[RMDB]
RNA sequence: GGGAACGACUCGAGUAGAGUCGAAAACUGGAGCUUGACUUAUGUAGCCGUGAUGUGUCUCGGAUAACUUUCUUCCAGAAAGACUGUAAUAAAUUCACAACCGGUGAGACGAUAGCGCAUGGUAAAGAUCAACCAGGCUGUUCGCAGCCUGGUUGAUAAAAGAAACAACAACAACAAC
Reactivity to DMS in 0.01 (KOAc 150mM, MgCl2 10mM, bicine 150mM(pH8.5), 24C), signal-to-noise 1, nucleotides 027 to 126: c080u000g000g000a300g010c000u000u000g000a260c190u020u000a110u000g020u000a260g010c010c000g050u050g010a150u000g000u000g000u000c070u020c110g000g010a110u010a030a090c020u000u000u000c030u030u020c130c230a090g000a040a060a020g000a060c060u010g000u000a100a120u000a020a100a020u000u000c040a010c040a080a080c070c000g000g030u030g000a140g000a150c060g000a040u000a020g030c040g010c060a050u000g020g000u020a040a010a140g000
The record gives the reactivity of an RNA of 177 nucleotides to DMS. DMS adducts were read by reverse transcription with MarathonRT. In probing experiments dimethyl sulfate is read out at A N1 and C N3, which are open when not base-paired. The reactions ran in a buffer of 150 mM KOAc, 10 mM MgCl2 and 150 mM bicine (pH 8.5), at 24 C. For DMS, 545 sequencing reads were counted.